[RMDB]
RNA sequence: GGGAACGACUCGAGUAGAGUCGAAAAACAGAAGGGUGAAAGUUCAAGCAAGCUAGCCGGCAAAAAAGCAAACUUGACCACCAAGGAUAAAAGAGAACUUAUCCAAGGAUGCAAAAGAUAAUCUCACAAAAGCUUCAUUCGUUCGCGAAUGAAGCAAGCCAAUUAUUACGUUCGCGUAAUAAUUGGCAAAAGAAACAACAACAACAAC
Reactivity to DMS in 0.01 (KOAc 150mM, MgCl2 10mM, bicine 150mM(pH8.5), 24C), signal-to-noise 1, nucleotides 027 to 156: a110c000a030g000a190a040g010g030g000u010g010a160a140a130g000u010u000c030a040a070g030c060a000a130g000c020u000a240g020c030c000g070g030c020a010a060a000a140a090a030g030c040a020a100a050c000u000u000g000a070c120c000a110c030c040a140a300g000g020a000u000a000a050a130a180g010a130g020a030a050c180u010u010a050u000c040c010a060a300g010g000a120u000g000c010a020a110a070a020g000a110u010a060a060u000c040u000c010a090c070a110a060a130a210g000c000u000u000c000a050u010u000c000g030u000u000c270g060c010g010a010a000u000g020a000a000g000c010a040a020
Reactivity to 2A3 in 0.01 (KOAc 150mM, MgCl2 10mM, bicine 150mM(pH8.5), 24C), signal-to-noise 4, nucleotides 027 to 156: a000c030a040g100a090a050g070g020g000u050g030a160a070a050g020u140u080c050a040a000g010c020a080a000g000c020u050a020g040c020c040g000g000c030a060a080a050a030a020a000g050c030a070a050a020c030u040u050g030a040c030c010a010c000c010a020a020g020g010a010u030a030a040a050a020g100a020g020a080a020c020u040u000a010u010c020c000a020a020g050g000a030u110g020c020a010a100a040a030g010a020u120a110a070u110c040u020c040a070c050a060a120a030a030g000c010u010u000c000a000u000u000c000g060u020u050c170g000c000g100a000a000u000g000a000a000g000c000a000a000
Source: RMDB library M2RFPK, as collected in RNAgym. This 207-nucleotide RNA was probed chemically with DMS and 2A3. For DMS the reverse transcriptase was MarathonRT. The RNA was probed in 150 mM KOAc, 10 mM MgCl2 and 150 mM bicine (pH 8.5) at 24 C.